The record gives the reactivity of an RNA of 177 nucleotides to DMS. The RNA was probed in 150 mM KOAc, 10 mM MgCl2 and 150 mM bicine (pH 8.5) at 24 C.
[RMDB]
RNA sequence: GGGAACGACUCGAGUAGAGUCGAAAAGAGGGUGUAGGCAUCGCGCAAGGAUCCGUCGGCUUCCUUUGCGAUCCAGGAAAGAGCCUCCUCCUCGACCUCCACCUGCAUCUCCGAGGCCGCCUCUCUGAUUGUGACUAAGUUUCGACUUAGUCACAAUAAAAGAAACAACAACAACAAC
Reactivity to DMS in 0.01 (KOAc 150mM, MgCl2 10mM, bicine 150mM(pH8.5), 24C), signal-to-noise 7, nucleotides 027 to 126: g000a030g000g010g010u010g010u010a040g010g010c060a090u000c030g000c030g030c150a030a030g000g000a030u000c040c040g020u010c200g010g010c130u000u000c010c000u000u000u010g020c020g010a040u000c110c120a150g010g000a060a090a130g010a150g000c010c010u000c040c030u000c030c010u000c030g010a110c050c020u000c030c020a100c040c020u000g010c060a080u000c020u000c050c030g000a120g010g010c020c020g000c040c030u000c030u000c050u000g000
Background:
The DMS profile rests on 11,771 reads.